[RMDB]
RNA sequence: GGGAACGACUCGAGUAGAGUCGAAAACGAACAAGUUCCGCAGCAACAAGAAAGCCGCCGAAAAGCGGAUCUUCGAGGUCGUGAAUUCGAAGAUAGACGACUUGAUCGAGACGGCGGAGUAUGACUGGAUGUCGCCCGUGCCGCAACGGGAACCCAGCUGUGCAAUACAAUUCGUUGUAUUGCACAGAAAAGAAACAACAACAACAAC
Reactivity to 2A3 in 0.01 (KOAc 150mM, MgCl2 10mM, bicine 150mM(pH8.5), 24C), signal-to-noise 4, nucleotides 027 to 156: c030g030a030a010c060a170a030g020u060u010c010c040g060c050a030g040c020a030a150c010a080a110g070a170a070a010g030c010c040g000c010c010g080a080a040a030a010g040c010g000g000a010u010c010u050u030c010g040a040g000g040u120c090g080u090g130a130a140u080u090c030g020a040a020g030a040u070a040g040a020c010g010a050c000u090u100g030a140u150c020g000a010g010a050c000g000g000c010g020g000a010g020u110a080u120g110a060c000u000g020g030a050u160g040u140c160g010c040c000c000g030u010g000c010c030g040c050a050a010c000g000g000g000a020a020c000c000c000a000g000
Reactivity to DMS in 0.01 (KOAc 150mM, MgCl2 10mM, bicine 150mM(pH8.5), 24C), signal-to-noise 3, nucleotides 027 to 156: c030g020a110a170c060a100a150g010u010u010c000c000g030c060a120g010c010a080a130c040a100a150g000a210a090a170g010c000c000g040c000c010g030a060a040a140a080g000c010g010g000a070u000c010u000u000c010g000a030g030g010u010c110g080u000g010a120a090u000u010c020g010a060a040g010a040u000a120g010a090c030g040a110c010u000u020g000a220u000c050g000a170g000a140c020g010g040c010g050g000a110g010u000a060u010g020a190c060u010g010g000a120u010g000u010c080g010c020c010c000g040u000g010c030c160g000c050a300a050c000g030g000g020a030a120c000c000c000a110g030